[RMDB]
RNA sequence: GGGAACGACUCGAGUAGAGUCGAAAAUUUGAGGUCCCCGGUCCCCCCACCACACACAUACACACGGAGAUGGGGAAAUAAAACGAACAAAAAGAAAACAUUCUUUUCUCUGACGAAGAGUAAAGCGUAUCCAGGUAAUUUUCGAAUUACCUGGAUAAAAAGAAACAACAACAACAAC
Reactivity to 2A3 in 0.01 (KOAc 150mM, MgCl2 10mM, bicine 150mM(pH8.5), 24C), signal-to-noise 3, nucleotides 027 to 126: u110u030u120g100a050g000g110u030c020c000c000c000g010g020u060c000c010c010c020c020c020a020c060c000a030c010a010c010a000c020a020u140a100c050a040c010a010c060g030g020a090g010a100u100g020g010g020g010a000a020a010u130a000a040a030a010c070g100a050a010c060a050a060a060a020a010g110a060a090a010a000c060a040u060u000c000u010u030u030u010c000u000c000u020g080a110c120g050a040a000g010a010g010u070a010a040a000g040c030g060
Reactivity to DMS in 0.01 (KOAc 150mM, MgCl2 10mM, bicine 150mM(pH8.5), 24C), signal-to-noise 4, nucleotides 027 to 126: u010u020u030g010a120g000g000u000c000c000c020c060g000g010u010c010c030c010c020c030c040a060c060c040a080c070a040c090a060c100a110u020a110c140a050c080a060c090g010g010a050g000a060u010g010g000g010g010a060a060a050u020a060a030a070a070c150g010a110a070c130a040a040a080a100a070g000a070a040a100a090c170a110u030u010c010u000u000u000u000c000u000c000u020g000a140c140g000a200a020g010a050g000u000a030a030a070g010c300g020